[RMDB]
RNA sequence: GGGAACGACUCGAGUAGAGUCGAAAACGAGAACGCUGGGGGAAGAGGUUGUGAGACUGGACAAGGUAGAGAAGCCAUUUUGUGUGUUUGGCUGUGCCAAACAACCAUUGUUAAUGUGCACGGUCGCGAUUGCUAGACGAUUCGUCGUCUAGCAAUCAAAAGAAACAACAACAACAAC
Reactivity to 2A3 in 0.01 (KOAc 150mM, MgCl2 10mM, bicine 150mM(pH8.5), 24C), signal-to-noise 7, nucleotides 027 to 126: c040g010a000g050a070a050c070g000c090u060g000g000g000g010g020a020a040g030a030g070g020u050u040g020u030g040a100g000a040c030u040g020g000a010c020a090a070g070g000u070a020g030a020g040a170a010g020c020c020a040u050u060u100u090g100u010g030u000g020u030u040u070g010g000c020u060g030u050g020c000c000a040a010a030c020a010a040c110c040a110u100u090g050u050u060a170a110u070g040u080g020c000a010c010g030g000u020c020g000c050
Reactivity to DMS in 0.01 (KOAc 150mM, MgCl2 10mM, bicine 150mM(pH8.5), 24C), signal-to-noise 5, nucleotides 027 to 126: c100g010a110g000a080a070c100g000c040u000g000g010g010g010g010a040a040g010a050g000g000u000u010g000u010g010a110g010a060c050u000g010g010a070c080a080a100g000g030u010a050g000a110g010a070a100g020c040c040a080u010u010u000u000g010u020g020u000g000u010u010u000g010g000c010u030g010u010g000c010c000a020a030a010c030a030a100c140c140a120u010u020g010u000u010a070a110u020g000u030g020c070a040c050g000g020u000c010g010c210